Chemical mapping of a 177-nucleotide RNA with DMS.

RNA sequence: GGGAACGACUCGAGUAGAGUCGAAAACUGCCUUGAUCCUGACCAGUCCUGGGGUGGAACUGGGGUAGAGGGCUGGGAAUAGAGAGAAACACUGGAUCUGAAGGUCAGCUCUAACUGCCAAAGCACAUCAGGGUAGAUCUUUCGAGAUCUACCCUGAAAAAGAAACAACAACAACAAC
Reactivity to DMS in 0.01 (KOAc 150mM, MgCl2 10mM, bicine 150mM(pH8.5), 24C), signal-to-noise 1, nucleotides 027 to 126: c070u060g000c050c010u000u010g010a080u000c000c000u030g050a290c070c010a010g000u010c010c030u000g000g030g000g020u000g010g010a100a070c110u000g000g010g030g000u040a010g010a110g000g000g000c000u020g010g010g010a090a050u010a090g000a070g030a140g010a130a070a070c080a160c030u050g020g000a050u000c010u000g010a020a060g030g000u020c030a040g000c010u030c050u000a090a070c070u000g020c060c090a100a040a050g030c070a010c170a100
Reactivities are given for positions 27 through 126. The reactions ran in a buffer of 150 mM KOAc, 10 mM MgCl2 and 150 mM bicine (pH 8.5), at 24 C.